The data come from the RNA Mapping Database (RMDB), library OK1LIB. An RNA of 177 nucleotides, treated with DMS and 2A3 and read out base by base. Reactivities are given for positions 27 through 126. The reactions ran in a buffer of 150 mM KOAc, 10 mM MgCl2 and 150 mM bicine (pH 8.5), at 24 C. For 2A3, 2,433 sequencing reads were counted. 2A3 adducts were read by reverse transcription with SuperScript II with manganese.

RNA sequence: GGGAACGACUCGAGUAGAGUCGAAAAGAAGAUAAGACACCAGACACCGUGGGCAGAUGACAAGAAAGUCCGUCGGUGUCGGUAAGGUCGUCAGUCACAGGCGACCGUUUUCUGUGACUCUAAAGAAACCUCGGGUAUAUUUCGAUAUACCCGAGGUAAAAGAAACAACAACAACAAC
Reactivity to DMS in 0.01 (KOAc 150mM, MgCl2 10mM, bicine 150mM(pH8.5), 24C), signal-to-noise 4, nucleotides 027 to 126: g000a010a000g000a040u010a140a160g000a210c130a010c010c030a130g050a010c000a000c010c030g060u020g000g000g010c000a070g030a190u030g020a150c300a160a090g000a050a210a090g000u010c000c000g000u030c010g010g030u000g010u000c000g020g010u020a040a030g050g010u020c000g000u000c000a100g020u010c260a090c200a080g020g010c000g020a050c010c040g000u000u000u000u000c000u000g030u000g040a040c020u000c010u000a040a110a080g020a080a040
Reactivity to 2A3 in 0.01 (KOAc 150mM, MgCl2 10mM, bicine 150mM(pH8.5), 24C), signal-to-noise 4, nucleotides 027 to 126: g030a010a000g030a040u100a060a030g120a000c050a020c070c020a020g010a010c000a000c000c000g010u020g020g000g000c020a040g040a300u220g030a200c040a040a080g060a190a070a040g030u000c000c000g080u100c000g010g000u000g010u000c000g000g030u030a010a000g010g000u000c020g000u000c020a020g100u170c080a040c040a130g000g000c000g000a020c000c010g000u060u000u000u010c030u010g120u130g040a040c000u020c020u070a150a140a030g120a080a110